[RMDB]
RNA sequence: GGGAACGACUCGAGUAGAGUCGAAAAGGAGUACUCUUCGGAGUACUCCAGCUACCGAGAAUCUUCCUCGGUAUAUAAAAGAAACGCUUGGAAACAAGGGAAAUACGGCAGGGUUCGCCCUGCCGAAGUUAGAGGACUUGUUCGCAAGUCCUCUAACAAAAGAAACAACAACAACAAC
Reactivity to 2A3 in 0.01 (KOAc 150mM, MgCl2 10mM, bicine 150mM(pH8.5), 24C), signal-to-noise 1, nucleotides 027 to 126: g000g010a040g090u100a000c000u030c030u100u120c300g030g010a000g010u010a020c000u000c000c020a000g000c020u030a020c000c010g000a000g010a030a170u080c080u190u060c110c000u000c000g010g000u010a050u000a000u000a090a040a010a020g030a030a120a000c050g030c120u000u000g000g010a020a000a010c010a000a010g010g000g050a120a090a020u120a060c010g030g040c010a010g030g010g010u040u140c150g020c030c020c010u000g000c000c000g000a010a000
Reactivity to DMS in 0.01 (KOAc 150mM, MgCl2 10mM, bicine 150mM(pH8.5), 24C), signal-to-noise 1, nucleotides 027 to 126: g000g010a010g020u020a010c010u000c010u020u030c080g020g000a000g040u000a020c000u000c000c000a010g020c140u000a000c000c020g000a020g020a180a100u010c110u030u000c090c030u000c000g010g020u000a000u020a050u010a040a020a020a040g000a150a090a080c090g000c020u000u000g000g010a090a140a220c020a020a010g000g000g030a140a080a100u000a150c000g010g000c000a010g000g010g000u000u000c270g010c010c010c000u000g000c010c010g000a000a000